RNA sequence: GGGAACGACUCGAGUAGAGUCGAAAAGGAUCCUCUCACAGGAUUGUCUCUGUGUUCCGAAACUCCAACAGUAUUGCUUCGGGACACCUAUAGCAAUACUGUAGGUAUAGAGAGUAGGAGAGGAUCGCUAUCAUCGAGCUUUCGAGCUCGAUGAUAGAAAAGAAACAACAACAACAAC
Reactivity to 2A3 in 0.01 (KOAc 150mM, MgCl2 10mM, bicine 150mM(pH8.5), 24C), signal-to-noise 2, nucleotides 027 to 126: g020g000a000u000c000c010u040c000u000c010a040c050a050g120g040a190u180u300g180u090c050u000c010u060g020u010g040u160u040c000c010g030a050a040a040c040u040c030c020a030a000c000a030g000u000a020u000u040g000c020u050u060c090g050g000g090a120c050a180c040c010u100a100u130a100g000c030a000a000u000a010c030u000g000u010a010g040g010u060a060u100a090g120a000g010a000g040u060a020g020g030a010g000a000g000g010a000u000c000g000
Reactivity to DMS in 0.01 (KOAc 150mM, MgCl2 10mM, bicine 150mM(pH8.5), 24C), signal-to-noise 3, nucleotides 027 to 126: g010g020a010u000c000c000u010c000u000c010a110c080a080g010g020a150u000u010g000u000c060u030c000u000g000u000g000u010u000c030c000g010a140a160a160c090u010c020c020a110a020c050a030g010u000a010u020u000g010c010u000u010c300g010g000g010a170c300a040c010c000u010a050u000a010g000c000a010a010u000a080c000u000g020u000a020g000g000u000a100u010a050g000a110g000a050g010u000a160g000g000a030g000a030g030g010a000u000c010g000